[RMDB]
RNA sequence: GGGAACGACUCGAGUAGAGUCGAAAACUUCCCAACUGCCUCACAAGGACAUUCAUGGCAACCGUAAUUCAUCCUCGCCCUCUGAUGAACUUGCUGGGCAGGAAGCAUCAGUAUGAGUAACAGGCAGCAUGUCCUUACGGUUCGCCGUAAGGACAUGAAAAGAAACAACAACAACAAC
Reactivity to 2A3 in 0.01 (KOAc 150mM, MgCl2 10mM, bicine 150mM(pH8.5), 24C), signal-to-noise 2, nucleotides 027 to 126: c000u000u020c000c000c000a000a040c000u000g000c000c010u190c010a020c010a050a020g030g000a020c010a010u070u070c040a010u150g000g000c030a040a050c060c020g080u090a030a200u190u200c050a110u110c060c070u040c030g010c010c000c000u000c000u000g000a000u010g000a020a000c000u010u010g060c050u020g020g000g000c000a000g000g010a020a040g040c020a070u030c030a010g120u120a120u200g070a030g040u060a030a040c000a030g000g060c000a010g010
Reactivity to DMS in 0.01 (KOAc 150mM, MgCl2 10mM, bicine 150mM(pH8.5), 24C), signal-to-noise 2, nucleotides 027 to 126: c300u000u000c000c000c010a190a200c040u000g010c010c000u010c170a080c020a030a030g000g000a300c030a020u000u000c070a010u000g000g000c020a100a140c300c160g000u000a110a030u000u000c160a050u000c050c030u000c300g000c010c000c010u000c020u000g020a010u000g000a070a120c010u000u000g010c060u000g030g000g010c010a000g000g000a030a050g000c030a080u000c020a040g000u000a120u020g000a140g000u000a040a030c040a070g020g000c130a100g000